[RMDB]
RNA sequence: GGGAACGACUCGAGUAGAGUCGAAAAGAUAUGGAAGCGCCAUGGAGUCUAUCGGUCGGAAACGACCGUAAGGACUAUGAAGUGGACGCUUCCUAAGUCAAAAUCUCGCAUGUUCGCAUGCGAGAAACAUACUGCAUUCGUUCGCGAAUGCAGUAUGAAAAGAAACAACAACAACAAC
Reactivity to 2A3 in 0.01 (KOAc 150mM, MgCl2 10mM, bicine 150mM(pH8.5), 24C), signal-to-noise 2, nucleotides 027 to 126: g010a010u000a010u070g000g000a000a000g010c020g030c000c010a000u000g040g080a170g010u000c000u030a060u110c020g000g000u020c010g010g000a090a020a020c010g000a010c010c010g020u010a060a060g020g000a000c000u100a300u260g050a030a000g010u020g010g050a090c010g010c000u010u000c000c000u010a000a000g010u010c020a020a000a120a300u040c000u000c010g000c000a020u020g040u100u150c300g040c160a010u000g000c000g000a010g030a000a000a020
Reactivity to DMS in 0.01 (KOAc 150mM, MgCl2 10mM, bicine 150mM(pH8.5), 24C), signal-to-noise 3, nucleotides 027 to 126: g000a030u000a110u000g000g020a020a000g020c000g020c000c000a010u000g000g000a040g020u000c000u010a210u010c010g020g000u000c010g030g000a060a040a100c000g000a020c010c000g020u000a040a150g000g020a020c000u020a280u010g000a210a280g000u000g000g000a170c020g050c000u000u000c000c010u010a010a050g010u000c030a130a090a130a150u000c000u000c000g010c000a010u000g000u010u020c260g010c000a000u000g000c000g010a000g010a010a060a130
Overview
The data come from the RNA Mapping Database (RMDB), library TTRDES. This 177-nucleotide RNA was probed chemically with 2A3 and DMS. The reactions ran in a buffer of 150 mM KOAc, 10 mM MgCl2 and 150 mM bicine (pH 8.5), at 24 C.